[RMDB]
Chemical mapping of a 177-nucleotide RNA with 2A3 and DMS. Conditions: 150 mM KOAc, 10 mM MgCl2 and 150 mM bicine (pH 8.5), 24 C. Values cover nucleotides 27 to 126. DMS (dimethyl sulfate) methylates the pairing face of unpaired adenines and cytosines.
RNA sequence: GGGAACGACUCGAGUAGAGUCGAAAAGAUGAAAAUAACCAACAAUGUGAUCUUGCUUGCGGAGGCAAAGUUUGCACAGUAUAAAAUCUGCAAGUAGUACUAUUGUUGGAAAGUAUACUGUGCAAAAGAGGAGUAUACCGUUCGCGGUAUACUCCUCAAAAGAAACAACAACAACAAC
Reactivity to 2A3 in 0.01 (KOAc 150mM, MgCl2 10mM, bicine 150mM(pH8.5), 24C), signal-to-noise 2, nucleotides 027 to 126: g170a090u300g120a000a000a000a120u190a030a040c010c000a010a000c020a030a010u180g080u000g300a200u150c110u050u050g000c000u000u000g000c000g000g040a000g040g060c080a050a000a000g040u000u000u000g000c050a000c000a000g000u030a050u040a140a060a040a130u010c010u010g000c000a000a000g010u010a020g110u090a060c020u000a000u000u000g000u000u000g000g090a000a000a000g000u050a000u020a030c000u000g000u000g000c000a010a010a010a010
Reactivity to DMS in 0.01 (KOAc 150mM, MgCl2 10mM, bicine 150mM(pH8.5), 24C), signal-to-noise 2, nucleotides 027 to 126: g000a180u050g010a080a020a150a140u030a050a200c030c000a000a010c000a000a010u000g000u000g000a060u080c170u000u020g040c000u020u000g050c000g010g010a050g030g000c300a060a100a080g010u030u030u050g010c000a030c020a000g020u010a000u000a000a020a050a130u000c000u000g000c020a000a020g020u000a040g010u000a080c020u000a030u000u000g010u010u020g020g010a040a060a090g010u040a000u010a020c000u010g030u010g000c000a050a000a090a060